[RMDB]
RNA sequence: GGGAACGACUCGAGUAGAGUCGAAAAAGUGGUCCACGGCGUAUCAAGUUUGGAGUCAUCCGGCCGAAGGGUUGAGAUGACCCACAGUCGGGUGAUCCACCAGGAGGGUGGAGGAGAGACCACCUCCGCAUAUCAUGAUGUUCGCAUCAUGAUAUGCAAAAGAAACAACAACAACAAC
Reactivity to 2A3 in 0.01 (KOAc 150mM, MgCl2 10mM, bicine 150mM(pH8.5), 24C), signal-to-noise 2, nucleotides 027 to 126: a000g020u020g000g000u010c010c010a050c030g040g000c040g070u130a080u260c110a090a050g050u050u130u110g060g020a110g020u010c000a000u000c000c000g020g000c000c010g030a100a080g090g010g000u030u010g110a200g010a200u090g040a030c000c000c000a020c000a000g010u010c000g000g000g060u060g020a020u000c000c000a000c000c010a050g090g040a070g020g090g040u060g000g020a040g030g040a080g010a010g010a010c000c000a000c000c010u000c000c010
Reactivity to DMS in 0.01 (KOAc 150mM, MgCl2 10mM, bicine 150mM(pH8.5), 24C), signal-to-noise 3, nucleotides 027 to 126: a050g020u010g010g010u000c010c020a150c060g020g000c030g020u000a050u010c180a100a160g000u000u000u010g010g010a210g000u000c000a000u000c010c000g000g000c000c030g000a200a120g010g010g040u010u000g000a160g010a070u000g010a010c000c000c000a100c080a020g010u000c010g010g010g000u000g000a120u000c020c020a030c090c030a130g030g010a150g000g000g010u010g010g020a060g010g010a120g020a170g000a090c030c010a050c000c030u000c030c040

The record gives the reactivity of an RNA of 177 nucleotides to 2A3 and DMS. For DMS the reverse transcriptase was MarathonRT. The reactions ran in a buffer of 150 mM KOAc, 10 mM MgCl2 and 150 mM bicine (pH 8.5), at 24 C. Values cover nucleotides 27 to 126. 2A3 adducts were read by reverse transcription with SuperScript II with manganese.